[RMDB]
RNA sequence: GGGAACGACUCGAGUAGAGUCGAAAAGUGCAAUUACAGUUCGAGAAGAUUAUCGCGGUUCUAGCUUUGCUCACAAUGUGCAUCGAUGCAGAAAGGAGCGAUGCUAUCUUUCGCAUUCUGAGUAAAAAUAACCACUUCUAUUCGUAGAAGUGGUUAUAAAAGAAACAACAACAACAAC
Reactivity to DMS in 0.01 (KOAc 150mM, MgCl2 10mM, bicine 150mM(pH8.5), 24C), signal-to-noise 9, nucleotides 027 to 126: g010u010g000c070a080a080u000u000a100c100a070g010u000u000c040g010a110g010a080a060g010a060u000u000a060u010c090g010c030g010g010u000u010c040u000a070g010c040u000u000u000g010c030u000c020a060c110a070a170u010g010u000g010c070a050u000c150g010a080u000g000c030a040g000a030a060a130g010g010a050g010c020g010a070u000g000c070u000a020u000c020u000u000u000c020g010c050a060u000u000c080u000g010a090g010u000a010a050a050a090
Reactivity to 2A3 in 0.01 (KOAc 150mM, MgCl2 10mM, bicine 150mM(pH8.5), 24C), signal-to-noise 8, nucleotides 027 to 126: g050u050g040c020a040a080u120u040a140c030a050g030u030u070c030g020a020g030a180a020g020a050u060u080a040u160c050g010c030g040g020u040u020c010u020a020g000c010u040u020u040g000c000u010c010a120c020a070a120u120g010u030g060c010a030u060c060g090a070u090g010c020a020g090a060a060a020g110g030a100g020c030g020a010u030g000c020u030a050u030c020u000u030u020c000g000c020a030u060u020c010u040g050a040g060u090a000a090a050a010